The record gives the reactivity of an RNA of 177 nucleotides to 2A3 and DMS. 2A3 adducts were read by reverse transcription with SuperScript II with manganese. For 2A3, 1,810 sequencing reads were counted. It was measured as part of the RMDB library OK1LIB.
RNA sequence: GGGAACGACUCGAGUAGAGUCGAAAAGAAGAGAGUCGACGCAAGCGACGAUAACUGCGGAACGGUAACCGUAGUACCGUAUGGUCAUGGCACGCGAAAGCGAAAGACCGCAACAUGCCAUAAGAGAAGUAUACCUGCUCUUCGGAGCAGGUAUACUAAAAGAAACAACAACAACAAC
Reactivity to 2A3 in 0.01 (KOAc 150mM, MgCl2 10mM, bicine 150mM(pH8.5), 24C), signal-to-noise 2, nucleotides 027 to 126: g130a070a050g090a010g030a010g020u030c020g000a150c010g020c160a050a020g070c020g040a020c000g040a060u080a040a040c020u060g030c000g000g000a070a040c080g100g080u110a150a020c010c010g030u050a000g020u000a060c000c000g020u070a020u020g020g000u060c020a000u000g010g000c080a020c120g020c020g080a040a030a010g010c030g020a210a000a040g080a030c000c100g000c000a010a050c030a090u030g000c000c000a000u020a080a030g040a030g030a170
Reactivity to DMS in 0.01 (KOAc 150mM, MgCl2 10mM, bicine 150mM(pH8.5), 24C), signal-to-noise 3, nucleotides 027 to 126: g040a100a030g000a040g000a290g000u020c040g000a130c100g020c230a080a110g000c000g020a040c010g000a150u020a150a040c090u000g000c050g030g010a200a040c050g000g000u000a050a100c010c080g010u000a080g000u010a040c060c010g000u000a020u000g010g000u030c070a010u000g000g040c010a120c060g000c000g000a050a040a070g010c030g000a150a070a070g010a130c060c030g000c110a070a120c060a020u010g000c010c000a020u000a130a080g010a090g010a110